[RMDB]
RNA sequence: GGGAACGACUCGAGUAGAGUCGAAAAGAUAUGGAACGAAGGGAGCUUAGUGUCGGAAACGACACGGGAGCGAGGAUCUCGUUCCUAAGUCAAAACAGUAAUAGAGCGUUCGCGCUCUAUUACUGAAGCCUUACCGUAAGUUCGCUUACGGUAAGGCAAAAGAAACAACAACAACAAC
Reactivity to DMS in 0.01 (KOAc 150mM, MgCl2 10mM, bicine 150mM(pH8.5), 24C), signal-to-noise 2, nucleotides 027 to 126: g000a010u000a300u000g040g000a000a010c000g000a070a080g020g010g020a270g000c010u000u000a170g000u000g010u020c000g000g010a110a050a130c010g000a010c000a020c010g010g000g010a000g030c000g000a140g020g000a180u010c020u000c000g000u000u000c000c000u000a060a100g000u010c030a020a130a100a220c010a010g000u000a010a010u000a000g010a010g010c000g000u010u020c270g020c020g020c000u000c000u000a000u000u000a000c010u000g000a060a090
Reactivity to 2A3 in 0.01 (KOAc 150mM, MgCl2 10mM, bicine 150mM(pH8.5), 24C), signal-to-noise 2, nucleotides 027 to 126: g020a000u070a020u100g000g000a020a010c020g130a270a140g010g000g040a010g020c020u030u030a020g000u000g000u010c000g030g000a090a060a050c010g020a020c000a010c020g050g260g000a000g000c020g030a140g000g010a020u010c000u000c010g020u000u020c000c000u000a160a010g050u050c040a010a000a110a180c000a000g030u010a000a010u000a000g010a010g000c020g000u050u100c270g020c000g020c110u000c000u010a000u000u000a000c000u000g010a010a010
Structure probing data (DMS and 2A3) for a 177-nucleotide construct. Source: RMDB library TTRDEL, as collected in RNAgym. 2A3 adducts were read by reverse transcription with SuperScript II with manganese. The reactions ran in a buffer of 150 mM KOAc, 10 mM MgCl2 and 150 mM bicine (pH 8.5), at 24 C.